[RMDB]
RNA sequence: GGGAACGACUCGAGUAGAGUCGAAAAGCUCGGAGACGAGCAAGGCUGACAAAACCCUGUCCCGACCUCCACGUGGUGUCGGCUGGAUAAUGCUGCAUUAUGUUGCAUUUAUCAACGGGGAAGGAAAAAAUAUUAGCGUCUUCGGACGCUAAUAUUUAAAAGAAACAACAACAACAAC
Reactivity to DMS in 0.01 (KOAc 150mM, MgCl2 10mM, bicine 150mM(pH8.5), 24C), signal-to-noise 3, nucleotides 027 to 126: g000c000u000c000g000g000a220g000a200c010g010a020g000c020a070a030g000g010c010u000g000a020c020a140a050a090a110c040c010c020u010g010u010c020c000c010g010a060c010c030u000c030c020a190c140g000u030g020g010u000g000u020c020g010g050c020u000g020g020a010u000a020a020u000g000c000u000g010c010a210u030u050a140u040g010u000u010g000c000a000u000u050u010a010u010c000a060a000c070g030g010g000g010a100a070g040g010a000a020a100
Reactivity to 2A3 in 0.01 (KOAc 150mM, MgCl2 10mM, bicine 150mM(pH8.5), 24C), signal-to-noise 6, nucleotides 027 to 126: g010c000u000c010g020g010a130g010a040c000g010a000g000c020a000a080g020g000c010u010g000a010c020a020a150a090a130c030c000c000u010g090u020c000c000c000g040a070c010c020u050c030c040a150c110g090u230g020g020u020g000u020c020g010g010c010u020g050g000a010u000a010a000u000g000c020u010g010c000a060u090u210a140u300g020u020u040g000c000a010u040u050u120a030u020c010a000a010c010g010g000g010g000a070a030g070g000a090a050a050

This 177-nucleotide RNA was probed chemically with DMS and 2A3. For 2A3 the reverse transcriptase was SuperScript II with manganese. The data come from the RNA Mapping Database (RMDB), library OK1LIB. The reactions ran in a buffer of 150 mM KOAc, 10 mM MgCl2 and 150 mM bicine (pH 8.5), at 24 C.